[RMDB]
RNA sequence: GGGAACGACUCGAGUAGAGUCGAAAAGAUAUGGAAAAUGGACGAUAAGAUCCUUUCGGAAACGAAAGAGAUCUUUUGACGUCCUAUUCCUAAGUCAAACCACUAUUACCUUCGGGUAAUAGUGGAAGCCUAAAAGAUACUUCGGUAUCUUUUAGGCAAAAGAAACAACAACAACAAC
Reactivity to 2A3 in 0.01 (KOAc 150mM, MgCl2 10mM, bicine 150mM(pH8.5), 24C), signal-to-noise 3, nucleotides 027 to 126: g000a010u050a020u060g000g060a000a050a030a050u160g010g000a000c020g030a050u050a280a030g000a010u000c000c000u000u000u000c010g010g030a060a040a030c010g020a000a000a000g060a010g000a000u020c000u030u020u010u080g040a010c000g000u000c000c000u000a030u010u010c000c000u000a090a000g030u010c050a070a040a110c010c000a000c000u010a010u000u000a000c010c000u020u060c170g090g010g000u000a010a000u000a000g010u000g000g010a010a020
Reactivity to DMS in 0.01 (KOAc 150mM, MgCl2 10mM, bicine 150mM(pH8.5), 24C), signal-to-noise 5, nucleotides 027 to 126: g000a020u000a300u010g000g000a010a010a220a140u010g010g010a040c000g020a130u000a030a020g000a000u000c000c000u000u000u000c000g000g000a070a060a160c000g010a020a000a000g000a120g010a010u000c000u000u000u000u010g020a190c060g000u000c010c010u000a170u000u010c000c000u000a040a120g010u000c040a070a160a230c010c000a010c000u000a000u000u000a010c000c000u000u010c200g020g000g010u000a000a000u000a010g010u000g010g000a010a040
Structure probing data (2A3 and DMS) for a 177-nucleotide construct.
DMS adducts were read by reverse transcription with MarathonRT.
The reactions ran in a buffer of 150 mM KOAc, 10 mM MgCl2 and 150 mM bicine (pH 8.5), at 24 C.
Values cover nucleotides 27 to 126.
2A3 adducts were read by reverse transcription with SuperScript II with manganese.